RNA sequence: GGGAACGACUCGAGUAGAGUCGAAAACGCCCCGUAGAACGGUAGGCCGAGGGUGGUGACAUUCAGACCGGGUAUGCGCGCAAGUAUCCCGCCAUUGGGAUUCAUCUCGUUGCCGAUCAAGAUGAAAUCAACUACCUACGUUCGCGUAGGUAGUUGAAAAAGAAACAACAACAACAAC
Reactivity to 2A3 in 0.01 (KOAc 150mM, MgCl2 10mM, bicine 150mM(pH8.5), 24C), signal-to-noise 5, nucleotides 027 to 126: c050g050c000c010c000c000g070u090a060g010a170a020c030g010g000u050a030g020g060c030c010g030a100g050g070g010u060g000g040u040g020a050c020a050u070u060c030a080g080a100c040c000g040g000g000u050a040u120g000c040g000c030g000c050a090a000g020u010a080u060c020c010c010g070c100c040a090u090u170g020g000g000a000u040u040c020a080u060c040u000c010g060u050u110g040c010c000g030a080u070c060a060a060g020a070u130g060a070a020a070
Reactivity to DMS in 0.01 (KOAc 150mM, MgCl2 10mM, bicine 150mM(pH8.5), 24C), signal-to-noise 3, nucleotides 027 to 126: c250g000c080c020c020c030g010u000a070g040a120a100c060g000g000u000a060g000g000c050c060g010a160g020g000g010u000g020g000u020g010a070c010a100u010u000c070a080g000a050c070c050g000g000g000u030a060u000g010c020g000c140g000c090a090a080g020u010a060u000c010c020c020g060c060c140a080u040u000g000g000g000a080u000u010c060a070u000c050u010c050g020u020u030g000c020c020g020a090u000c060a060a010g030a040u010g010a060a040a170

Background:
Structure probing data (2A3 and DMS) for a 177-nucleotide construct. DMS adducts were read by reverse transcription with MarathonRT. High DMS reactivity at an A or C suggests that its Watson-Crick edge is free. The reactions ran in a buffer of 150 mM KOAc, 10 mM MgCl2 and 150 mM bicine (pH 8.5), at 24 C.